RNA sequence: GGGAACGACUCGAGUAGAGUCGAAAAUGGGCUGAGGGGUCUGCAUUCAAGCACGAUGUUCUAGAAUAGGAGUUUAACGUGUCUACGUAACCUAGAAUGUGGUUAUUAGGAAAGGGGCUGUGCAUGUGGGUGCAGCUGGCGGCACACCUGGUCACCACCACCCCGUAAAUUUCGAUUUACGGGGUGGAAAAGAAACAACAACAACAAC
Reactivity to 2A3 in 0.01 (KOAc 150mM, MgCl2 10mM, bicine 150mM(pH8.5), 24C), signal-to-noise 1, nucleotides 027 to 156: u050g000g000g000c040u080g060a010g000g000g100g000u060c000u010g000c000a040u080u100c110a060a020g080c040a000c000g070a080u240g090u090u020c060u080a020g030a180a100u060a190g070g050a150g020u170u120u070a040a000c030g030u030g050u000c030u050a020c040g030u000a000a000c000c000u060a000g020a190a130u170g030u000g010g120u190u000a050u060u100a000g020g070a060a060a020g030g000g000g000c000u010g030u020g010c110a030u240g060u030g070g090g010u000g000c070a000g020c030u040g030g030c000g010g000c000a060c000a000c010c000u110g080g000u030c030a000c060c010a000